This 207-nucleotide RNA was probed chemically with DMS and 2A3. As a SHAPE reagent, 2A3 marks flexible, mostly unpaired nucleotides at the ribose 2'-OH.

[RMDB]
RNA sequence: GGGAACGACUCGAGUAGAGUCGAAAAGUAUCCCUAGAUGAUAAAACACCGCACAAGGCUCGUAAGAGCGGUUAAAUUAGCAAGUAAUGCAAAUUACGCGAGGUAACGCAUGGCCUAGGCUCGUUAGAAAAGGGAGAAUCCUUCGGGAUUCUCCCAAGAUUGUUAUCAUGUUCGCAUGAUAACAAUCAAAAGAAACAACAACAACAAC
Reactivity to DMS in 0.01 (KOAc 150mM, MgCl2 10mM, bicine 150mM(pH8.5), 24C), signal-to-noise 3, nucleotides 027 to 156: g020u010a100u000c010c000c020u000a100g030a130u000g000a110u010a050a060a130a130c040a080c030c020g050c040a130c050a100a140g010g010c020u000c020g010u000a140a130g000a080g010c010g020g000u000u000a050a060a090u000u000a130g000c070a080a110g010u000a030a050u000g010c110a070a100a070u000u000a040c060g030c010g010a100g000g010u000a040a090c060g000c060a080u000g010g000c000c040u000a120g030g000c040u000c060g000u000u000a130g000a090a050a070a170g000g000g020a030g020a030a000u000c000c000u000u010c300g070g040g000a020u000u000c000u000c000c000c030a010a010
Reactivity to 2A3 in 0.01 (KOAc 150mM, MgCl2 10mM, bicine 150mM(pH8.5), 24C), signal-to-noise 4, nucleotides 027 to 156: g050u040a070u080c000c010c010u010a050g070a160u110g020a030u120a090a070a010a000c050a010c010c040g030c030a030c010a120a020g070g000c020u020c080g100u070a060a040g020a010g040c020g000g030u030u050a010a080a090u090u070a030g050c050a120a000g060u100a080a050u100g040c060a020a050a090u120u040a020c030g030c020g040a040g020g080u050a020a010c020g010c070a030u060g030g000c000c010u010a040g030g020c020u020c050g040u030u020a050g120a040a110a010a030g010g010g000a000g000a000a000u000c000c000u030u070c120g020g000g000a000u010u000c000u000c000c000c000a000a000
Description: The reactions ran in a buffer of 150 mM KOAc, 10 mM MgCl2 and 150 mM bicine (pH 8.5), at 24 C. DMS adducts were read by reverse transcription with MarathonRT.